[RMDB]
An RNA of 177 nucleotides, treated with DMS and read out base by base.
RNA sequence: GGGAACGACUCGAGUAGAGUCGAAAAGGAAAAGUCUUCGGGCACCACCUCGUACCCCGCAGCCUCCAGACCCCUGAGGAGUGUGGACUUGCCCGCUCCAAUGUUGCCGCUAAACGCUAUGACCGUAAUGGUAGACAACAUUCGUGUUGUCUACCAUAAAAGAAACAACAACAACAAC
Reactivity to DMS in 0.01 (KOAc 150mM, MgCl2 10mM, bicine 150mM(pH8.5), 24C), signal-to-noise 3, nucleotides 027 to 126: g000g010a080a080a110a060g010u000c020u000u000c090g030g010g010c030a100c060c040a060c050c040u000c020g000u000a110c100c020c010c060g040c030a060g020c020c010u000c030c030a110g000a190c040c030c020c050u000g030a200g000g020a010g010u000g020u020g000g010a220c160u000u010g000c010c020c020g000c040u010c020c010a070a080u000g020u020u000g010c010c030g020c040u010a040a070a070c090g000c040u000a070u000g000a110c060c050g010u010a060
The RNA was probed in 150 mM KOAc, 10 mM MgCl2 and 150 mM bicine (pH 8.5) at 24 C.